[RMDB]
RNA sequence: GGGAACGACUCGAGUAGAGUCGAAAAGAUAUGGAUGUUCCGAUAAGACGAUAUCGGAAACGAUAUUCGUCUUUUGACGGGCAUCCUAAGUCAAAGUGUGGUACAGACUUCGGUCUGUACCACACAACAUCGCAUAAGGGUUCGCCCUUAUGCGAUGAAAAGAAACAACAACAACAAC
Reactivity to DMS in 0.01 (KOAc 150mM, MgCl2 10mM, bicine 150mM(pH8.5), 24C), signal-to-noise 3, nucleotides 027 to 126: g010a030u010a300u010g020g020a020u000g020u010u000c000c000g000a130u010a010a010g000a020c010g030a020u010a000u000c000g000g000a080a050a140c010g000a010u000a010u010u010c000g010u000c000u000u000u010u000g000a300c300g000g000g010c000a000u000c000c000u000a010a060g000u000c010a070a080a140g010u010g050u000g000g030u000a000c000a010g000a020c000u000u010c260g000g000u000c000u000g020u000a000c000c000a000c010a000c000a010a170
Reactivity to 2A3 in 0.01 (KOAc 150mM, MgCl2 10mM, bicine 150mM(pH8.5), 24C), signal-to-noise 2, nucleotides 027 to 126: g040a010u090a020u110g000g010a000u010g000u140u170c000c000g000a030u030a070a000g000a010c000g010a000u020a000u000c040g000g060a030a040a010c000g000a010u000a020u080u230c010g010u030c010u010u050u010u010g020a040c010g020g000g010c000a000u000c000c000u010a030a010g040u020c050a100a040a110g000u000g000u000g000g000u010a010c010a020g010a010c050u130u160c300g010g020u000c010u000g010u000a000c000c000a010c000a010c000a010a000
This 177-nucleotide RNA was probed chemically with DMS and 2A3.
For DMS the reverse transcriptase was MarathonRT.
Reactivities are rounded to 0.1 and cut off at 0 and 3.
Reactivities are given for positions 27 through 126.
The reactions ran in a buffer of 150 mM KOAc, 10 mM MgCl2 and 150 mM bicine (pH 8.5), at 24 C.